[RMDB]
RNA sequence: GGGAACGACUCGAGUAGAGUCGAAAAACGAAAUAAAAUAGACAAUGGAAUUCAUUUGAUGUAUCCAGAGAGGCCAAUUGUGAUUAGUAAGGCUUUAGAAACUUCAAAGAUUGCGGCUAAUUGCUUCGGACAACAUGUUACUAUAGCAUUAAUGUCGGUUCCAUUCUGGUUUCGACCAGAAUGGAACAAAAGAAACAACAACAACAAC
Reactivity to 2A3 in 0.01 (KOAc 150mM, MgCl2 10mM, bicine 150mM(pH8.5), 24C), signal-to-noise 1, nucleotides 027 to 156: a020c030g060a000a000a050u220a020a050a100a020u200a030g050a100c090a080a040u110g030g050a000a060u010u280c030a130u120u130u240g020a050u080g020u130a050u030c060c020a000g000a000g000a020g140g020c020c080a070a040u130u150g020u090g090a050u000u050a000g030u020a120a080g000g000c000u000u000u090a080g060a050a020a070c000u030u020c060a000a090a090g010a060u000u190g000c000g020g000c050u130a000a130u020u020g050c070u000u090c050g000g030a000c020a030a000c000a030u090g000u060u000a060c030u060a030u090a140g050c090a090u050u000a130a000u020g090u160c000g000